[RMDB]
RNA sequence: GGGAACGACUCGAGUAGAGUCGAAAAACAGCGCACUACGGUGCGCUGAUGAUGAUGAUACAGCCAGGACCCUGAUGGGAUGAUGAGUGGUGGGCUUAGCUGAUGAGAGGAGUAUACGUACUCCUCAGUAACAGUCCGGUUUCGACCGGACUGUUACAAAAGAAACAACAACAACAAC
Reactivity to 2A3 in 0.01 (KOAc 150mM, MgCl2 10mM, bicine 150mM(pH8.5), 24C), signal-to-noise 5, nucleotides 027 to 126: a000c010a000g000c010g010c000a010c010u020a040c300g110g000u000g000c000g000c010u010g010a010u010g000a020u030g000a000u030g000a010u040a120c020a020g030c020c010a030g050g040a160c010c000c040u100g050a140u170g030g060g010a030u090g010a020u070g020a050g020u060g020g090u070g040g020g000c030u040u070a020g000c010u040g030a070u130g070a160g000a010g130g000a000g000u010a000u020a090c230g040u000a010c020u000c000c000u000c010a000
Reactivity to DMS in 0.01 (KOAc 150mM, MgCl2 10mM, bicine 150mM(pH8.5), 24C), signal-to-noise 2, nucleotides 027 to 126: a120c050a020g040c020g030c000a000c020u000a120c190g020g000u000g000c010g000c000u000g000a010u000g000a060u030g020a100u000g000a140u000a110c090a050g010c030c070a080g010g030a110c040c000c030u000g000a160u000g010g000g060a020u010g000a060u000g000a090g020u010g000g000u040g000g000g000c060u000u000a120g020c040u000g010a180u000g000a150g020a000g000g010a000g010u000a010u020a080c220g020u000a000c000u000c000c000u000c000a060

Chemical mapping of a 177-nucleotide RNA with 2A3 and DMS. Conditions: 150 mM KOAc, 10 mM MgCl2 and 150 mM bicine (pH 8.5), 24 C. Source: RMDB libraries RFM100 and RFMREP, as collected in RNAgym. DMS adducts were read by reverse transcription with MarathonRT. Values cover nucleotides 27 to 126.